[RMDB]
RNA sequence: GGGAACGACUCGAGUAGAGUCGAAAAGAUAUGGAAACGUAACAUCGUGCGGCAUCUAUGAAGCGGCGAAUAGCUUCGGAAACGAAGCUAUUCGCCGUGGAGAUGUCGCACGUGGUUUCCUAAGUCAGUACCUACUAAGGUUCGCCUUAGUAGGUACAAAAGAAACAACAACAACAAC
Reactivity to DMS in 0.01 (KOAc 150mM, MgCl2 10mM, bicine 150mM(pH8.5), 24C), signal-to-noise 2, nucleotides 027 to 126: g000a070u020a300u010g000g010a010a030a010c010g040u000a020a140c180a020u010c000g050u010g030c030g000g010c000a010u000c010u000a140u010g030a070a300g000c010g020g060c000g030a030a010u010a000g020c000u000u000c000g050g000a080a130a300c000g030a050a000g020c000u030a020u000u000c000g000c000c000g010u000g000g000a020g000a000u000g030u000c000g000c010a000c010g020u010g000g010u000u000u000c030c000u020a030a110g000u000c050a190